RNA sequence: GGGAACGACUCGAGUAGAGUCGAAAAUUGUGCUGACGUUGAUGGGUCAGAAGCGGAGCAGUCGUCCCUUCGACAUAUUCAAUGGGGAUAUACAGAAUGAAGACGAACUUCUACAGUAUGCAUUAUCACUCCCUUUUGCAUUCGUGCAAAAGGGAGUAAAAGAAACAACAACAACAAC
Reactivity to DMS in 0.01 (KOAc 150mM, MgCl2 10mM, bicine 150mM(pH8.5), 24C), signal-to-noise 3, nucleotides 027 to 126: u010u010g030u000g000c010u000g000a110c040g040u000u010g030a060u000g010g000g010u000c010a060g030a060a120g030c130g010g000a050g040c060a080g010u000c070g030u010c010c040c010u030u000c070g020a060c200a070u000a070u000u000c020a140a090u010g000g020g010g020a070u000a050u000a070c070a140g000a090a070u020g010a060a030g020a090c100g000a090a120c060u010u010c010u020a110c110a050g010u000a070u000g000c050a070u000u000a080u000c140
Reactivity to 2A3 in 0.01 (KOAc 150mM, MgCl2 10mM, bicine 150mM(pH8.5), 24C), signal-to-noise 1, nucleotides 027 to 126: u070u050g060u030g000c000u090g000a010c020g060u030u040g010a060u080g060g040g080u040c050a040g010a020a010g020c070g030g020a030g060c060a010g060u030c010g030u020c000c000c000u000u030c000g010a030c010a010u100a040u100u000c080a140a130u200g210g010g020g000a000u020a020u010a050c040a000g090a130a060u130g000a080a010g060a030c080g070a130a140c010u010u020c000u020a000c010a000g030u060a050u110g060c030a040u110u000a060u250c070

Structure probing data (DMS and 2A3) for a 177-nucleotide construct.
2A3 adducts were read by reverse transcription with SuperScript II with manganese.